Structure probing data (2A3 and DMS) for a 177-nucleotide construct.
The DMS profile rests on 1,969 reads.
The RNA was probed in 150 mM KOAc, 10 mM MgCl2 and 150 mM bicine (pH 8.5) at 24 C.
It was measured as part of the RMDB library OK2TST.
DMS (dimethyl sulfate) methylates the pairing face of unpaired adenines and cytosines.
RNA sequence: GGGAACGACUCGAGUAGAGUCGAAAAUGCUUCCACAGUGCGUUAGCAAGAUGUCUUCACCCUUAAAUAUGCUUAACUUAUGGCACGUAGAUCCAGCAUCAUAUAAUUCUUUGGAAUCAGGUGAAUAACAUGCUUUGCAUUUCGAUGCAAAGCAUGUAAAAGAAACAACAACAACAAC
Reactivity to 2A3 in 0.01 (KOAc 150mM, MgCl2 10mM, bicine 150mM(pH8.5), 24C), signal-to-noise 3, nucleotides 027 to 126: u060g010c000u040u000c000c000a020c050a070g060u080g000c030g060u060u060a010g040c020a050a020g030a090u090g040u050c020u060u060c060a090c010c010c020u040u110a040a110a010u190a070u090g040c000u080u090a090a040c000u100u130a090u110g060g000c020a000c030g040u070a020g000a050u040c020c010a010g030c000a040u050c050a000u110a000u010a080a150u150u020c040u070u060u070g080g050a040a050u060c030a040g120g000u080g090a010a000u090a030
Reactivity to DMS in 0.01 (KOAc 150mM, MgCl2 10mM, bicine 150mM(pH8.5), 24C), signal-to-noise 3, nucleotides 027 to 126: u000g010c050u000u000c030c010a090c120a130g040u000g000c040g020u000u000a070g020c030a070a090g020a070u000g000u010c080u000u000c030a100c030c010c080u000u000a030a060a100u000a130u010g030c040u010u000a070a110c120u000u000a070u000g010g020c060a020c090g020u010a070g000a070u000c030c050a070g020c060a030u010c070a060u010a080u000a050a080u010u000c030u000u000u000g010g010a100a080u010c150a070g000g010u000g010a050a070u010a060